[RMDB]
This 177-nucleotide RNA was probed chemically with 2A3. For 2A3, 503 sequencing reads were counted.

RNA sequence: GGGAACGACUCGAGUAGAGUCGAAAAAUUGGAUACGUGGUCCCAAUAACUGGCGAGAUCUUGAGAACAAAAUAUGGGCUUAUACUAUGAGUGCCAUAGACGCCGAGAUGCAGGCUCGUGCAUCACAGCAGCGUGGAAGGUUCGCCUUCCACGCUGCAAAAGAAACAACAACAACAAC
Reactivity to 2A3 in 0.01 (KOAc 150mM, MgCl2 10mM, bicine 150mM(pH8.5), 24C), signal-to-noise 2, nucleotides 027 to 126: a000u160u020g050g000a060u060a140c090g000u040g000g000u100c000c000c000a000a000u250a190a000c000u050g070g000c010g010a090g040a140u000c070u120u200g120a130g040a010a120c070a070a070a130a000u000a000u000g080g000g000c000u130u080a110u080a300c160u110a110u210g040a000g020u050g300c000c000a000u040a030g060a020c000g000c000c040g080a070g000a000u060g000c080a000g020g000c150u130c100g050u020g050c000a000u000c000a000c000a010